An RNA of 207 nucleotides, treated with DMS and 2A3 and read out base by base. Conditions: 150 mM KOAc, 10 mM MgCl2 and 150 mM bicine (pH 8.5), 24 C. The 2A3 profile rests on 4,408 reads. Source: RMDB library OK3TST, as collected in RNAgym. As a SHAPE reagent, 2A3 marks flexible, mostly unpaired nucleotides at the ribose 2'-OH. Reactivities are given for positions 27 through 156.
RNA sequence: GGGAACGACUCGAGUAGAGUCGAAAAGAGCUUUUACCUCAACCACACCUUCAAGCGUUUGUCCAUCAUGUUUGACUCCUCUGUCAGUUGGCCAGGCAACGACCGCUUGCUGACCCCCAACGAAUUUGAAAUCAAAAGGGUGGUCGACGGAGAGGGCAUACGAAUACGAUUUCGAUCGUAUUCGUAUAAAAGAAACAACAACAACAAC
Reactivity to DMS in 0.01 (KOAc 150mM, MgCl2 10mM, bicine 150mM(pH8.5), 24C), signal-to-noise 3, nucleotides 027 to 156: g020a140g010c020u010u000u000u000a070c040c030u000c020a100a190c040c010a070c060a080c010c020u000u000c060a070a120g050c000g010u010u020u000g010u010c020c020a060u000c040a070u000g020u000u000u000g030a060c020u000c060c020u000c040u000g020u010c030a110g000u000u000g010g020c030c040a210g030g030c080a070a090c070g010a080c070c040g000c050u000u000g000c030u000g000a100c020c010c020c010c010a080a130c080g010a080a140u000u010u000g000a070a080a120u000c080a030a090a060a120g000g020g030u000g050g000u000c010g030a040c050g020g010a220g020a060g020g020g050c080
Reactivity to 2A3 in 0.01 (KOAc 150mM, MgCl2 10mM, bicine 150mM(pH8.5), 24C), signal-to-noise 6, nucleotides 027 to 156: g040a000g020c070u120u120u160u180a120c030c030u070c040a040a050c030c020a030c010a060c050c030u080u080c090a160a100g050c020g080u090u160u170g040u030c040c020a090u090c030a090u170g090u080u040u090g060a060c030u050c020c010u030c020u030g110u120c050a070g000u030u040g020g000c030c040a050g010g000c010a030a020c050g150a150c060c060g060c120u000u030g000c000u020g060a110c020c000c010c010c000a020a020c020g030a010a020u130u200u270g090a130a110a040u060c030a030a060a060a000g020g010g000u030g000g010u000c010g010a010c010g000g010a000g020a030g020g000g000c010